This 177-nucleotide RNA was probed chemically with 2A3 and DMS.
Conditions: 150 mM KOAc, 10 mM MgCl2 and 150 mM bicine (pH 8.5), 24 C.
It was measured as part of the RMDB library OK1LIB.
Reactivities are given for positions 27 through 126.
For 2A3 the reverse transcriptase was SuperScript II with manganese.
[RMDB]
RNA sequence: GGGAACGACUCGAGUAGAGUCGAAAAAUGUGGCUUUUCCACAAAUGGAGCAAAACUUGUUUGCCCUUUCUUUGGAUGAUACAAGCUCAGUUCGUGGUUCUUUGCUUGACACAAAAUUCGCACAAACUCAUAUUCUGGGCUUCGGCCCAGAAUAUGAAAAAGAAACAACAACAACAAC
Reactivity to 2A3 in 0.01 (KOAc 150mM, MgCl2 10mM, bicine 150mM(pH8.5), 24C), signal-to-noise 5, nucleotides 027 to 126: a000u080g030u030g040g000c070u130u050u140u090c000c000a010c030a010a060a050u100g040g000a190g030c020a000a000a040a220c100u130u170g080u150u120u100g040c020c000c000u050u130u030c110u090u140u100g000g040a050u060g010a010u100a100c040a030a010g020c000u010c030a040g040u050u110c060g040u090g050g090u060u080c000u060u040u040g020c000u020u090g030a010c000a000c010a110a130a120a170u150u050c040g010c140a020c030a120a080a040c060
Reactivity to DMS in 0.01 (KOAc 150mM, MgCl2 10mM, bicine 150mM(pH8.5), 24C), signal-to-noise 1, nucleotides 027 to 126: a160u000g020u000g010g010c120u030u000u000u020c000c000a010c060a000a080a040u000g000g000a040g060c020a020a000a150a300c180u010u000g010u000u000u000g000c060c010c050u000u010u030c000u000u000u040g000g000a070u000g020a170u000a000c060a010a080g020c010u010c000a110g030u000u060c000g000u000g060g000u020u010c040u010u000u000g000c030u000u030g000a120c270a000c090a050a060a010a040u000u040c060g000c090a080c190a120a010a000c300